The data come from the RNA Mapping Database (RMDB), library OK1LIB. Structure probing data (2A3 and DMS) for a 177-nucleotide construct. For DMS, 23,794 sequencing reads were counted.
RNA sequence: GGGAACGACUCGAGUAGAGUCGAAAACAAAACAAACUGAUAGAGACGCACGCACUCUAUCAGAGAGCGCCUUGGCGAGCGCGCUCGUCGCGACGCAAAUGCGCAACAAAGACAAAACAAGACACAACGGUGGUAUAUAGUUCGCUGUGUGCUGCCGAAAAGAAACAACAACAACAAC
Reactivity to 2A3 in 0.01 (KOAc 150mM, MgCl2 10mM, bicine 150mM(pH8.5), 24C), signal-to-noise 9, nucleotides 027 to 126: c020a000a080a000a000c050a020a060a020c000u000g000a000u000a000g010a000g020a020c030g050c060a040c040g020c010a010c030u000c000u000a000u000c000a000g000a000g000a010g000c000g000c000c010u010u020g050g000c010g010a150g100c010g000c000g010c030u120c100g160u210c000g000c000g010a020c000g000c000a010a030a020u040g010c010g010c010a000a010c030a020a100a010g160a010c040a010a060a020a000c060a050a020g110a030c040a000c010a130a040
Reactivity to DMS in 0.01 (KOAc 150mM, MgCl2 10mM, bicine 150mM(pH8.5), 24C), signal-to-noise 9, nucleotides 027 to 126: c040a080a050a100a070c140a060a090a150c000u000g000a000u000a010g000a010g000a060c070g010c130a050c120g020c100a210c000u000c000u000a000u000c000a000g000a060g000a170g010c010g010c000c080u000u000g000g010c000g000a100g000c010g010c020g000c020u030c180g000u040c010g010c010g000a070c020g000c000a030a010a020u000g000c000g020c010a140a080c190a080a070a050g000a100c230a080a050a050a090c180a070a060g000a070c120a050c110a050a110
For 2A3, 60,940 sequencing reads were counted. 2A3 adducts were read by reverse transcription with SuperScript II with manganese. The reactions ran in a buffer of 150 mM KOAc, 10 mM MgCl2 and 150 mM bicine (pH 8.5), at 24 C. For DMS the reverse transcriptase was MarathonRT.